RNA sequence: GGGAACGACUCGAGUAGAGUCGAAAAGAACAAAGGUAUGGUUGCUGAGCAAAUGCUGCUUCUCUCAUUUCUCCUCAAAUUUCCUUACCAUUUCUGAGCAUGUCACCCUGACUUCUUAUGAUCAAGAGUUACAUCAUCAGAGUGGCUGCUACCAUAACGCAUAGGUGAGUUUCGACUCACCUAUGCGAAAAGAAACAACAACAACAAC
Reactivity to 2A3 in 0.01 (KOAc 150mM, MgCl2 10mM, bicine 150mM(pH8.5), 24C), signal-to-noise 1, nucleotides 027 to 156: g030a050a020c070a090a170a020g030g050u030a060u040g040g000u000u030g000c030u030g000a000g010c050a000a000a150u120g000c150u040g010c160u140u050c160u060c000u000c050a020u060u020u020c020u040c000c080u060c020a080a120a000u040u100u130c010c000u010u050a030c010c010a020u000u270u000c050u060g000a000g000c000a050u230g010u020c010a020c000c000c030u000g040a040c000u120u040c010u040u210a150u210g080a090u120c100a090a030g040a010g080u090u080a030c040a100u130c000a000u030c010a020g000a000g000u000g000g000c000u020g000c000u000a050c010c000a030u130a140a020